This 177-nucleotide RNA was probed chemically with DMS and 2A3. Values cover nucleotides 27 to 126. The DMS profile rests on 1,095 reads. The RNA was probed in 150 mM KOAc, 10 mM MgCl2 and 150 mM bicine (pH 8.5) at 24 C. 2A3 adducts were read by reverse transcription with SuperScript II with manganese.

RNA sequence: GGGAACGACUCGAGUAGAGUCGAAAAGAUAUGGAGUAUCUGUAGAAACGAGCUCACUCGGAAACGAGUGUUGCUCUCGCUACAGAGUACUCCUAAGUCAAAAGGAGACACGUUCGCGUGUCUCCAAGACGUUAGUCAUCUUCGGAUGACUAACGUCAAAAGAAACAACAACAACAAC
Reactivity to DMS in 0.01 (KOAc 150mM, MgCl2 10mM, bicine 150mM(pH8.5), 24C), signal-to-noise 1, nucleotides 027 to 126: g010a010u000a100u000g000g020a020g020u000a040u000c000u000g010u010a030g020a260a170a040c300g020a000g020c020u000c000a010c000u020c010g020g010a070a030a110c010g010a000g020u000g020u000u010g000c020u000c000u000c300g000c000u010a000c000a010g000a060g000u000a000c010u000c000c040u010a010a060g000u000c020a090a070a180a140g020g010a010g000a010c000a020c010g050u010u000c260g010c000g030u000g000u000c010u000c000c000a000a070
Reactivity to 2A3 in 0.01 (KOAc 150mM, MgCl2 10mM, bicine 150mM(pH8.5), 24C), signal-to-noise 1, nucleotides 027 to 126: g000a000u040a010u010g010g000a020g010u020a000u010c000u020g000u020a020g100a280a300a070c190g010a010g020c000u020c020a010c010u000c010g020g020a000a010a000c010g000a000g010u000g020u080u100g000c000u000c000u000c040g180c020u000a000c000a010g000a000g020u010a000c010u000c000c000u000a010a000g040u000c010a030a030a000a280g000g000a000g000a020c000a000c020g060u090u100c300g050c000g160u000g000u020c000u000c000c010a010a010